[RMDB]
RNA sequence: GGGAACGACUCGAGUAGAGUCGAAAAGGAUACCUCCGGGCAGCUUGUCUGCUUGCAUGCUCCCAUGGGCUGGCUCCUGCUUGCAGUCCCAGCUUCCGGAAUGAGAGGGAGAGCGCAGCAUCUGGCUUCAUUUACCCGGGUUCGCCCGGGUAAAUGAAAAAGAAACAACAACAACAAC
Reactivity to DMS in 0.01 (KOAc 150mM, MgCl2 10mM, bicine 150mM(pH8.5), 24C), signal-to-noise 1, nucleotides 027 to 126: g020g000a150u010a060c000c110u000c000c000g040g000g020c030a000g000c060u000u000g000u140c060u000g010c120u050u000g060c070a070u000g000c000u000c000c020c010a100u070g000g000g030c040u000g000g000c040u030c110c040u000g000c000u000u000g010c000a020g020u020c300c080c100a000g000c030u000u060c000c010g010g040a060a060u000g060a070g030a010g030g000g010a040g000a040g000c050g030c040a030g000c010a140u000c030u000g000g000c070u000
Reactivity to 2A3 in 0.01 (KOAc 150mM, MgCl2 10mM, bicine 150mM(pH8.5), 24C), signal-to-noise 2, nucleotides 027 to 126: g070g010a080u090a110c000c010u000c000c010g030g010g040c010a000g000c010u130u100g070u150c010u050g010c000u000u010g000c010a030u140g020c000u000c000c000c030a010u110g070g000g010c020u000g010g000c010u050c030c010u020g030c010u040u090g060c010a000g040u060c020c000c000a000g000c000u090u020c050c030g040g060a170a120u140g030a090g000a070g050g040g000a030g000a000g000c040g020c020a010g010c010a060u020c010u040g050g040c000u000
Structure probing data (DMS and 2A3) for a 177-nucleotide construct. The data come from the RNA Mapping Database (RMDB), library RFM100. 2A3 adducts were read by reverse transcription with SuperScript II with manganese. The RNA was probed in 150 mM KOAc, 10 mM MgCl2 and 150 mM bicine (pH 8.5) at 24 C. The DMS profile rests on 1,182 reads. Reactivities are given for positions 27 through 126.